The record gives the reactivity of an RNA of 207 nucleotides to DMS and 2A3. The reactions ran in a buffer of 150 mM KOAc, 10 mM MgCl2 and 150 mM bicine (pH 8.5), at 24 C. For DMS, 4,414 sequencing reads were counted. Reactivities are given for positions 27 through 156. For 2A3, 12,594 sequencing reads were counted.
[RMDB]
RNA sequence: GGGAACGACUCGAGUAGAGUCGAAAAGUUUACGCUCCAAGAUCGGUGGAUAUCAGCCCUAUCAAUAUCUAGGAGAACUGUGCUAUGUUUAGAAGAUUAGGUAGUCUCUAAACAGAACAAUUUACCUCAUACGUUAGGACGUUCGCGUCCUAACGAAGCGAUUACAUAAGUUCGCUUAUGUAAUCGCAAAAGAAACAACAACAACAAC
Reactivity to DMS in 0.01 (KOAc 150mM, MgCl2 10mM, bicine 150mM(pH8.5), 24C), signal-to-noise 3, nucleotides 027 to 156: g000u010u000u010a060c100g050c040u000c020c030a060a140g040a110u000c060g030g000u000g000g020a110u000a100u010c100a190g030c050c020c030u000a130u010c070a060a100u000a080u000c080u000a080g010g020a300g000a040a060c030u000g020u010g030c030u010a150u000g020u000u000u000a020g010a050a080g010a050u000u000a190g020g010u000a160g020u000c010u000c010u000a010a010a000c010a030g000a070a060c030a020a070u000u010u000a110c010c020u000c050a110u010a170c020g020u000u000a020g010g000a010c010g020u010u010c300g040c080g030u000c010c000u010a020a010c010g010a060a140
Reactivity to 2A3 in 0.01 (KOAc 150mM, MgCl2 10mM, bicine 150mM(pH8.5), 24C), signal-to-noise 9, nucleotides 027 to 156: g020u040u080u090a060c060g010c010u000c010c020a050a020g010a030u060c090g030g070u080g040g060a080u060a100u220c070a070g060c010c010c020u060a060u080c050a080a080u040a030u190c040u060a050g010g010a020g010a050a050c070u100g020u030g070c030u060a020u100g010u010u000u000a060g010a300a010g000a030u030u040a030g050g020u040a010g010u000c000u000c000u000a000a010a010c010a020g020a040a030c090a020a030u060u060u050a030c010c010u060c050a110u090a170c010g000u000u000a000g000g000a000c000g000u020u030c220g020c010g070u010c000c000u000a000a000c000g000a010a000